[RMDB]
RNA sequence: GGGAACGACUCGAGUAGAGUCGAAAACAAGGGCGCAUGGGUGCUCGCUCGCUACGAUGACGGGCGUCCCAGCCAGGUGCGGCUCGACACCGCUGUUCAAGGCAUCGAGGGCACCUAUAUCCACGCCUCCGAGAGCCGAAUUCGUUCGGCUCUCGGAAAAAGAAACAACAACAACAAC
Reactivity to 2A3 in 0.01 (KOAc 150mM, MgCl2 10mM, bicine 150mM(pH8.5), 24C), signal-to-noise 2, nucleotides 027 to 126: c130a130a080g050g000g000c060g140c030a100u140g000g000g240u000g000c000u050c000g000c010u040c000g200c210u190a140c190g230a170u090g040a060c060g000g000g030c000g040u100c010c010c000a000g040c020c000a000g030g000u030g010c000g060g160c000u000c020g000a020c030a010c190c080g000c010u070g000u250u260c130a070a000g020g000c050a080u010c000g000a020g000g110g000c000a000c000c000u000a040u000a000u000c070c000a080c080g090c000c050